[RMDB]
RNA sequence: GGGAACGACUCGAGUAGAGUCGAAAAUGGGGGUUUAGGGGGCGAAAGCCUCCGGCUCCCUGUCAAACUCCGAACCCACUGCCGCCGUAGAUGGCCGGAGUAGGGGGGCGGUGUAAGCCGUCACCCGAGAGGGGAACAACCCAGACCGGGGUUAAGGGAAAUAUUACAUGUUCGCAUGUAAUAUUUCAAAAGAAACAACAACAACAAC
Reactivity to DMS in 0.01 (KOAc 150mM, MgCl2 10mM, bicine 150mM(pH8.5), 24C), signal-to-noise 2, nucleotides 027 to 156: u030g010g020g020g020g040u000u010u000a130g110g030g020g020g020c000g000a110a060a190g010c000c000u030c000c000g000g000c000u000c000c010c010u000g000u000c060a080a130a090c020u000c010c010g000a020a100c020c000c020a130c050u000g030c000c060g030c040c070g000u000a090g000a170u000g000g010c080c030g000g000a100g010u000a100g020g000g010g020g000g030c020g000g010u000g010u000a120a280g010c000c000g060u000c010a060c000c010c000g010a120g000a180g000g000g000g000a050a060c050a040a070c000c000c000a300g000a150c080c070g010g030g040g000u000u000a040a030g000g000
Reactivity to 2A3 in 0.01 (KOAc 150mM, MgCl2 10mM, bicine 150mM(pH8.5), 24C), signal-to-noise 2, nucleotides 027 to 156: u040g000g030g000g000g010u040u060u150a110g020g040g000g040g000c010g040a050a010a000g010c020c000u000c010c020g000g000c000u000c000c010c000u000g020u010c040a020a060a010c000u000c020c000g050a120a100c020c050c000a030c040u100g060c010c020g060c030c100g040u070a070g020a250u110g020g000c040c070g000g020a020g010u090a100g000g000g000g000g000g000c000g000g000u000g070u110a200a010g020c000c010g000u000c000a020c040c000c010g010a020g010a040g030g000g000g030a030a040c030a010a030c020c000c010a040g050a120c030c050g030g000g000g000u030u090a090a100g110g010